[RMDB]
RNA sequence: GGGAACGACUCGAGUAGAGUCGAAAAAGUUCGCGCUUGCGUGAAACGCGAAAAUCGGACGGUGGCUGCAAGUCGCAUCGCAAAACCGCGGCAAGUGGAGUUAGCGAGAGGAGGCUGGGUUUUGGCUAGAACACACGGUACUUCGGUACCGUGUGAAACAUGUUUCUUGAUUCGUCAAGAAACAUGUAAAAGAAACAACAACAACAAC
Reactivity to 2A3 in 0.01 (KOAc 150mM, MgCl2 10mM, bicine 150mM(pH8.5), 24C), signal-to-noise 3, nucleotides 027 to 156: a000g060u060u050c020g010c010g000c050u070u090g020c040g050u090g030a130a060a040c040g010c000g030a030a010a010a090u100c060g020g010a020c020g030g020u060g020g020c060u050g010c030a030a090g010u050c010g010c020a050u060c010g030c040a050a070a020a030c050c030g010c010g030g030c060a120a060g030u060g060g030a030g020u060u110a030g010c030g030a060g000a000g080g030a030g000g010c030u040g030g030g000u000u040u060u110g010g000c000u040a050g060a160a010c010a000c000a000c010g000g000u010a010c000u010u060c210g050g000u000a000c010c010g000u000g000u010g010a000a000
Reactivity to DMS in 0.01 (KOAc 150mM, MgCl2 10mM, bicine 150mM(pH8.5), 24C), signal-to-noise 2, nucleotides 027 to 156: a100g010u010u000c020g040c020g020c010u000u000g070c140g020u000g010a050a040a090c000g000c020g000a020a020a070a090u010c080g000g000a080c040g000g020u000g020g020c040u000g000c030a050a070g020u000c040g020c040a130u000c020g030c040a080a080a080a150c060c030g000c030g000g010c050a070a160g020u000g010g020a170g000u000u000a110g010c030g000a090g010a150g030g010a070g010g010c030u000g000g020g010u000u000u010u000g000g000c110u000a130g010a080a260c000a060c000a000c020g000g000u010a000c000u000u000c260g030g050u000a000c050c000g000u010g000u000g010a010a070
About this RNA: An RNA of 207 nucleotides, treated with 2A3 and DMS and read out base by base. Values cover nucleotides 27 to 156. The RNA was probed in 150 mM KOAc, 10 mM MgCl2 and 150 mM bicine (pH 8.5) at 24 C. DMS adducts were read by reverse transcription with MarathonRT.